[RMDB]
RNA sequence: GGGAACGACUCGAGUAGAGUCGAAAAUGAGGUCUGUGGAAACCUGGAGUCACAGGAGAAAAAUGAGGAAACGAUGAAAACUACAGGCUCUUUGGCAGCAGAGGCUGUGUCUAGCUUGUUUCGGAAACAACAGUUUCAGGCAUAUGACAGACAAUAACGUACCCCAUUUAUUCGUAAAUGGGGUACGAAAAGAAACAACAACAACAAC
Reactivity to 2A3 in 0.01 (KOAc 150mM, MgCl2 10mM, bicine 150mM(pH8.5), 24C), signal-to-noise 3, nucleotides 027 to 156: u130g030a010g080g010u000c000u000g010u010g090g060a040a040a060c010c000u010g040g010a030g060u070c030a040c060a160g070g070a050g090a060a090a010a030a040u090g000a050g090g060a030a050a000c050g060a070u090g070a070a090a040a010c040u070a060c020a000g020g030c010u010c010u060u110u130g080g000c050a030g010c010a010g050a040g180g030c020u020g000u030g020u020c040u040a030g020c010u020u030g000u040u040u030c040g020g020a070a040a070c060a050a010c010a030g000u010u020u030c030a030g000g030c060a050u060a020u210g000a010c000a000g030a020c040a030a050u140a110a010
Reactivity to DMS in 0.01 (KOAc 150mM, MgCl2 10mM, bicine 150mM(pH8.5), 24C), signal-to-noise 1, nucleotides 027 to 156: u000g020a140g000g010u000c010u000g000u040g010g000a150a000a040c000c000u000g000g000a120g020u020c070a200c030a120g040g030a140g010a070a070a070a150a120u010g010a200g010g020a040a090a070c040g010a130u010g020a050a080a070a090c020u000a060c050a100g010g000c010u000c000u000u000u000g010g000c110a050g030c070a020g000a130g020g010c000u000g030u010g000u000c040u010a160g030c070u010u000g010u000u000u000c010g060g000a170a060a080c070a050a060c120a070g010u030u000u010c000a030g040g000c010a080u000a170u010g010a110c030a060g000a070c040a070a060u000a040a050